[RMDB]
Structure probing data (DMS and 2A3) for a 177-nucleotide construct.
DMS adducts were read by reverse transcription with MarathonRT.
For 2A3 the reverse transcriptase was SuperScript II with manganese.
RNA sequence: GGGAACGACUCGAGUAGAGUCGAAAACGGGAAGCUGAGGUUUUUCCUAUGUCUGAACAAUGACGCCAUCGUUUUCUGGGUCUUCGAAGCAGUUGCAAAGAAAUGCCCAGAUGGAGGACAGAGGGCCAGACUAAGUGAGUUUCGACUCACUUAGUCUAAAAGAAACAACAACAACAAC
Reactivity to DMS in 0.01 (KOAc 150mM, MgCl2 10mM, bicine 150mM(pH8.5), 24C), signal-to-noise 6, nucleotides 027 to 126: c050g010g000g000a080a080g020c040u000g020a090g010g000u000u010u020u000u000c010c010u000a090u010g010u000c020u010g010a140a110c140a110a100u040g010a090c090g000c130c110a080u020c060g010u010u020u010u000c020u000g000g000g020u010c220u000u010c010g020a180a230g000c020a240g020u020u070g010c020a020a080a280g000a020a020a040u020g010c000c000c000a000g000a010u000g020g020a150g010g000a050c020a020g010a060g010g000g010c150c170
Reactivity to 2A3 in 0.01 (KOAc 150mM, MgCl2 10mM, bicine 150mM(pH8.5), 24C), signal-to-noise 9, nucleotides 027 to 126: c020g020g020g030a040a020g020c060u070g030a130g060g090u040u020u020u060u070c010c000u030a070u090g020u000c010u030g080a110a050c050a080a180u190g030a020c020g060c080c030a110u080c080g030u050u050u040u030c010u010g000g000g030u000c020u010u020c030g050a110a020g000c030a140g100u300u300g060c010a080a080a010g020a010a030a030u120g010c000c000c000a000g000a000u020g030g030a050g000g040a000c010a030g040a040g010g020g010c030c030